The record gives the reactivity of an RNA of 177 nucleotides to DMS. For DMS, 1,764 sequencing reads were counted. Source: RMDB library RFMREP, as collected in RNAgym. Values are in units of 0.01, from 0 to 300, in steps of 10. The reactions ran in a buffer of 150 mM KOAc, 10 mM MgCl2 and 150 mM bicine (pH 8.5), at 24 C.
[RMDB]
RNA sequence: GGGAACGACUCGAGUAGAGUCGAAAAUUGAACUUAGUACGAGAGGAACCGUUCAUUCACGUAAUUGGUAUUUACAUCUGUUUGAUAAGACAAUGUUGUGAAGCUACCACGUGUUGGAUUAUGGCUGCUGUGUGUAUGGGUUCGCCCAUACACACAGAAAAGAAACAACAACAACAAC
Reactivity to DMS in 0.01 (KOAc 150mM, MgCl2 10mM, bicine 150mM(pH8.5), 24C), signal-to-noise 3, nucleotides 027 to 126: u000u000g010a020a050c040u000u000a030g010u010a150c020g000a300g010a230g020g020a070a130c190c270g000u000u000c000a030u010u000c050a040c060g010u000a070a130u010u010g020g010u010a070u000u000u000a000c000a030u000c030u000g000u010u000u000g000a140u010a120a080g000a020c010a020a020u000g030u010u000g020u010g010a030a030g020c150u000a040c100c060a060c140g000u000g010u000u000g010g000a100u000u000a100u000g000g010c080u010g020